[RMDB]
RNA sequence: GGGAACGACUCGAGUAGAGUCGAAAACGAUCCUUCGGGAUCGCCUGCUUCCUAAGUCAAGAGCGCAGAUACCCUUUAGGCAUCGAUCUAUCGGAAACGAUAGGGAGCCUAUAGGGAGUAGCUCUUGAUAUGGAUGACACACGUGUUCGCACGUGAAUGUUUACAGGGUAUUCGUACCCUGUAAACAAAAAGAAACAACAACAACAAC
Reactivity to 2A3 in 0.01 (KOAc 150mM, MgCl2 10mM, bicine 150mM(pH8.5), 24C), signal-to-noise 3, nucleotides 027 to 156: c010g000a000u000c010c010u030u100c260g090g000g000a000u010c000g010c000c010u020g010c010u000u010c010c000u050a220a050g020u000c000a000a010g000a000g010c030g100c300a030g060a160u140a130c000c000c000u020u020u010a020g030g000c070a250u230c130g050a100u040c010u000a010u000c000g080g000a120a030a070c010g000a000u000a010g000g010g000a010g010c000c000u010a010u020a010g000g030g000a000g010u000a010g000c000u010c000u000u000g000a000u000a000u020g000g000a010u040g130a030c030a000c000a000c120g010u010g040u110u100c210g030c120a000c000g000u030g050a070a140
Reactivity to DMS in 0.01 (KOAc 150mM, MgCl2 10mM, bicine 150mM(pH8.5), 24C), signal-to-noise 3, nucleotides 027 to 156: c000g010a000u000c010c000u000u000c300g070g030g000a030u000c000g000c010c040u000g000c050u000u000c000c020u000a050a280g010u010c000a030a010g000a040g040c010g000c060a200g000a250u000a120c000c010c010u010u000u000a010g030g040c000a250u000c130g040a090u000c010u000a000u010c000g000g000a180a150a250c010g000a010u000a010g020g010g000a060g000c000c010u010a030u000a020g030g010g020a130g000u000a290g010c000u010c000u000u010g000a020u000a180u000g020g010a110u000g000a240c060a210c000a020c000g040u010g020u010u000c260g040c010a020c000g000u020g010a100a190